Chemical mapping of a 177-nucleotide RNA with DMS and 2A3. DMS (dimethyl sulfate) methylates the pairing face of unpaired adenines and cytosines. DMS adducts were read by reverse transcription with MarathonRT. For 2A3, 2,557 sequencing reads were counted. 2A3 adducts were read by reverse transcription with SuperScript II with manganese. The DMS profile rests on 1,224 reads. Source: RMDB library M2PK50, as collected in RNAgym.
RNA sequence: GGGAACGACUCGAGUAGAGUCGAAAAGGAGUACUCUUCGGAGUACUCCAGCUACCGAGAAUCUUCCUCGGAAUAUAAAAGAAACCCUUGGAAACAAGGGAAAUACGGCAGGGUUCGCCCUGCCGAAGAGUAUGACUUACUUCGGUAAGUCAUACUCAAAAGAAACAACAACAACAAC
Reactivity to DMS in 0.01 (KOAc 150mM, MgCl2 10mM, bicine 150mM(pH8.5), 24C), signal-to-noise 2, nucleotides 027 to 126: g000g000a050g000u020a010c010u000c000u000u040c150g010g010a020g020u000a010c000u000c000c010a010g000c080u000a080c000c000g000a010g010a110a120u050c120u010u010c100c010u000c040g020g020a140a020u000a090u020a080a080a120a120g000a090a130a110c000c000c000u010u010g000g010a150a080a220c010a020a010g000g000g000a010a010a060u000a150c020g000g000c010a010g010g000g000u000u010c230g000c010c000c000u000g000c010c000g000a040a030
Reactivity to 2A3 in 0.01 (KOAc 150mM, MgCl2 10mM, bicine 150mM(pH8.5), 24C), signal-to-noise 2, nucleotides 027 to 126: g010g000a040g040u070a000c020u030c020u080u110c300g010g010a010g010u000a010c000u000c000c000a000g020c000u070a060c000c010g000a010g060a060a100u070c050u120u060c080c010u020c010g000g070a110a040u110a000u030a060a110a040a050g040a090a100a050c010c000c000u010u000g020g000a050a020a010c000a000a000g000g000g000a020a040a000u010a000c000g000g000c000a000g020g030g000u020u080c130g050c010c000c000u010g020c000c000g000a020a000